[RMDB]
RNA sequence: GGGAACGACUCGAGUAGAGUCGAAAAUUACUGUAUCCACACCAAUCAUAUGCAUUUUGUGUGGCAAUAUACGAUAUUCGAUGCCCUCAUAAUAUGCGUAUAUUUUUAUGCAUUGCUCUACAAAAAGGAUUUUGUCGUGAUUCGUCGUGACAGAGUCAAAAGAAACAACAACAACAAC
Reactivity to 2A3 in 0.01 (KOAc 150mM, MgCl2 10mM, bicine 150mM(pH8.5), 24C), signal-to-noise 9, nucleotides 027 to 126: u110u070a070c050u050g030u070a060u150c000c000a010c000a000c010c060a040a030u080c050a070u130a110u300g090c090a050u030u010u040u070g020u000g000u020g000g000c010a020a010u030a000u010a060c060g050a050u030a070u090u110c080g060a060u130g040c010c030c000u070c030a070u110a180a030u070a030u070g090c010g030u020a020u000a050u060u140u040u060u050a050u050g020c030a020u010u140g030c030u030c030u080a090c080a050a130a040a030a030g150
Reactivity to DMS in 0.01 (KOAc 150mM, MgCl2 10mM, bicine 150mM(pH8.5), 24C), signal-to-noise 9, nucleotides 027 to 126: u010u020a100c180u010g010u020a040u010c010c010a020c020a030c030c300a040a040u010c070a150u030a110u030g010c080a040u010u010u010u010g020u000g010u010g000g010c300a040a020u010a030u010a040c040g010a060u010a030u010u000c110g010a130u020g010c030c010c030u010c140a090u030a030a030u010a010u010g010c010g010u000a010u000a010u010u010u020u010u010a020u010g000c020a020u010u000g010c070u010c050u010a050c110a030a050a070a090a080g010